Source information: This 177-nucleotide RNA was probed chemically with 2A3 and DMS. Conditions: 150 mM KOAc, 10 mM MgCl2 and 150 mM bicine (pH 8.5), 24 C. Values cover nucleotides 27 to 126.

RNA sequence: GGGAACGACUCGAGUAGAGUCGAAAAUCCCCAUAGUUCGCUAUGGGGAAAAGCCGUACCGCCUAGCACGCGGAUAGGAGCGAAGAUAUCCACGGCACGCGAAAACCUUCGCCUUCGGGCGAAGGAAUCCCGAUAGUAUGUUCGCAUACUAUCGGGAAAAAGAAACAACAACAACAAC
Reactivity to 2A3 in 0.01 (KOAc 150mM, MgCl2 10mM, bicine 150mM(pH8.5), 24C), signal-to-noise 1, nucleotides 027 to 126: u020c000c000c000c000a020u010a010g010u010u050c190g000c070u000a000u000g000g000g000g000a060a010a020a060g010c000c000g050u050a050c020c020g000c020c010u030a040g000c050a020c070g020c000g000g010a030u140a050g040g020a020g010c050g080a110a030g030a230u090a060u080c060c020a010c020g000g010c100a050c110g000c050g040a040a040a030a100c000c000u010u000c010g000c020c000u020u070c180g070g000g010c000g000a000a000g010g000a030a030
Reactivity to DMS in 0.01 (KOAc 150mM, MgCl2 10mM, bicine 150mM(pH8.5), 24C), signal-to-noise 2, nucleotides 027 to 126: u000c000c000c000c010a000u000a000g020u010u000c180g040c000u000a000u000g010g020g010g020a010a000a030a140g000c030c010g000u000a230c030c030g000c000c010u000a200g000c110a150c300g010c000g010g010a050u000a050g020g010a070g000c040g000a150a070g000a160u010a060u000c020c030a030c030g000g000c020a120c090g020c100g000a100a040a100a120c010c000u000u000c000g020c000c000u000u010c210g050g000g010c000g000a000a010g010g000a000a040